Overview:
Chemical mapping of a 207-nucleotide RNA with DMS and 2A3. The data come from the RNA Mapping Database (RMDB), library RNAMAK. Reactivities are given for positions 27 through 156.
[RMDB]
RNA sequence: GGGAACGACUCGAGUAGAGUCGAAAAGGGGUCGCUCCGCUUGGCAUCAUGACAGCGAGCGACAUGCACUGAAGCCUCCACGGUGCAACAGCGCUCGCGGAGCCAAUGAGCGACGGAGGCACCCAAACCAGUUGUUGGCUUCGGCCAACAACUGGAACAACAACUACCAGUUCGCUGGUAGUUGUUGAAAAGAAACAACAACAACAAC
Reactivity to DMS in 0.01 (KOAc 150mM, MgCl2 10mM, bicine 150mM(pH8.5), 24C), signal-to-noise 1, nucleotides 027 to 156: g020g000g000g040u000c010g010c030u000c000c100g040c160u010u000g020g080c000a190u000c150a110u010g060a090c080a070g010c000g010a030g000c000g040a080c020a010u010g050c000a030c000u000g010a060a130g010c000c010u020c020c010a270c060g000g000u010g050c000a070a190c110a160g020c050g010c000u030c000g010c000g030g010a300g010c030c020a050a070u000g000a160g010c030g010a040c010g000g050a050g050g040c010a090c030c010c000a070a120a160c010c000a140g010u000u000g010u000u010g010g000c000u000u000c300g000g000c000c020a000a000c020a000a000c010u000g020g000a040a150
Reactivity to 2A3 in 0.01 (KOAc 150mM, MgCl2 10mM, bicine 150mM(pH8.5), 24C), signal-to-noise 2, nucleotides 027 to 156: g080g010g010g020u000c010g000c000u000c010c040g080c080u000u020g010g000c020a140u090c070a180u300g230a210c070a090g010c020g010a010g000c000g040a040c000a000u050g000c010a010c000u020g040a100a050g020c000c010u010c020c010a020c020g000g000u050g030c000a020a040c040a010g250c060g000c000u010c020g010c050g050g040a000g010c010c000a000a030u180g000a000g010c000g000a000c000g000g000a000g000g000c000a030c000c000c000a010a040a080c000c000a000g000u000u000g000u000u000g000g000c020u080u050c250g090g000c020c000a000a000c000a000a000c000u000g000g000a000a010